Annotation:
Source: RMDB library OK2TST, as collected in RNAgym. Structure probing data (DMS and 2A3) for a 177-nucleotide construct.
[RMDB]
RNA sequence: GGGAACGACUCGAGUAGAGUCGAAAAAGCCUUAACAAAUGCAUUUGAAAAGGGAAAUACAGAGGUUAAUGCAUGGCCGGAAGUUCAAAGCUACCUUGAAGAGAAAGGUCUACAGAAUAUCACAUUACUCAUGUACGCUAUUCGUAGCGUACAUGAGAAAAGAAACAACAACAACAAC
Reactivity to DMS in 0.01 (KOAc 150mM, MgCl2 10mM, bicine 150mM(pH8.5), 24C), signal-to-noise 1, nucleotides 027 to 126: a140g070c050c050u050u020a020a130c090a080a030a050u010g010c070a060u000u000u000g000a070a120a120a060g020g000g000a010a060a080u020a060c120a080g000a120g000g020u000u000a050a060u000g000c020a030u000g010g010c030c050g000g000a070a200g010u000u010c050a020a050a100g020c060u000a060c050c050u000u000g000a080a060g020a160g000a060a100a070g000g010u000c010u000a090c100a050g000a090a040u010a090u000c070a040c050a060u020u010a130
Reactivity to 2A3 in 0.01 (KOAc 150mM, MgCl2 10mM, bicine 150mM(pH8.5), 24C), signal-to-noise 2, nucleotides 027 to 126: a000g080c050c000u040u050a040a040c050a080a240a000u060g030c000a040u020u090u110g180a100a120a020a030g190g030g050a100a110a020u230a060c080a040g100a050g120g010u080u120a010a030u080g000c030a030u040g000g010c050c040g060g000a030a030g060u050u040c040a020a020a010g000c010u020a090c010c010u050u050g040a060a010g030a020g070a080a090a000g010g040u010c030u040a040c030a050g160a130a010u150a030u200c020a050c010a150u040u230a040